[RMDB]
RNA sequence: GGGAACGACUCGAGUAGAGUCGAAAAAUUACUGCACCUUAUGUAGUUCUCACUGGCUUAGGUGAGUCCUUUAAGAAAGUUGCAACCAUACCGUAUAAGGUUUGCAACUCUGUUAAGGAUACUCUGGUACGGCCUCUCUUCGGAGAGGCCAAAAGAAACAACAACAACAAC
Reactivity to DMS in 0.01 (KOAc 150mM, MgCl2 10mM, bicine 150mM(pH8.5), 24C), signal-to-noise 1, nucleotides 027 to 129: a000u100u140a080c030u000g000c090a000c110c010u010u080a140u000g060u000a030g000u010u000c040u050c050a080c100u030g000g040c100u050u010a080g060g000u010g020a080g030u000c000c000u080u000u000a040a050g030a000a000a000g010u000u000g010c000a000a080c020c030a130u040a120c090c160g030u000a300u030a000a150g020g010u080u030u000g030c000a040a000c000u040c020u000g010u000u000a000a000g010g000a030u140a020c060u010c080u000g020g020u070a090c180
Reactivity to 2A3 in 0.01 (KOAc 150mM, MgCl2 10mM, bicine 150mM(pH8.5), 24C), signal-to-noise 3, nucleotides 027 to 129: a000u110u100a030c000u030g060c020a050c050c020u100u050a090u110g060u040a020g000u090u010c010u000c000a020c020u020g020g030c040u120u140a040g050g000u030g010a010g020u000c000c010u000u010u010a100a000g030a000a110a000g000u000u000g000c020a050a000c010c000a020u080a110c060c120g100u140a100u040a210a150g010g000u030u030u040g000c020a000a000c000u010c000u020g060u110u030a000a000g000g020a000u040a040c020u090c010u020g010g000u080a070c060
Overview: This 170-nucleotide RNA was probed chemically with DMS and 2A3. The reactions ran in a buffer of 150 mM KOAc, 10 mM MgCl2 and 150 mM bicine (pH 8.5), at 24 C. For 2A3, 4,657 sequencing reads were counted.